An RNA of 177 nucleotides, treated with 2A3 and read out base by base. The 2A3 profile rests on 482 reads. 2A3 adducts were read by reverse transcription with SuperScript II with manganese.
RNA sequence: GGGAACGACUCGAGUAGAGUCGAAAAGCCCCGUAUCACGGACCAGUACGACGUGCGUCAGCUCCAGAGUAGCGGGGGUUGGAAAUCCCUCGUGAAUGUGGCAGGCAUCGACUGCCAAGACUAAGUAGUCGGAUCCACAGUUCGCUGUGGAUCCGACAAAAGAAACAACAACAACAAC
Reactivity to 2A3 in 0.01 (KOAc 150mM, MgCl2 10mM, bicine 150mM(pH8.5), 24C), signal-to-noise 1, nucleotides 027 to 126: g020c060c000c000c050g100u200a110u060c040a000c020g070g030a040c060c000a060g070u040a020c110g060a000c050g110u090g050c010g000u000c050a020g000c010u030c020c020a030g000a000g130u000a000g000c000g000g000g000g010g000u000u180g030g100a000a000a040u000c000c020c000u010c000g070u050g000a040a030u200g000u070g020g060c110a000g000g050c000a070u290c100g040a040c020u000g060c000c000a020a000g010a000c000u090a110a040g020u080a020
Source: RMDB library RFM100, as collected in RNAgym.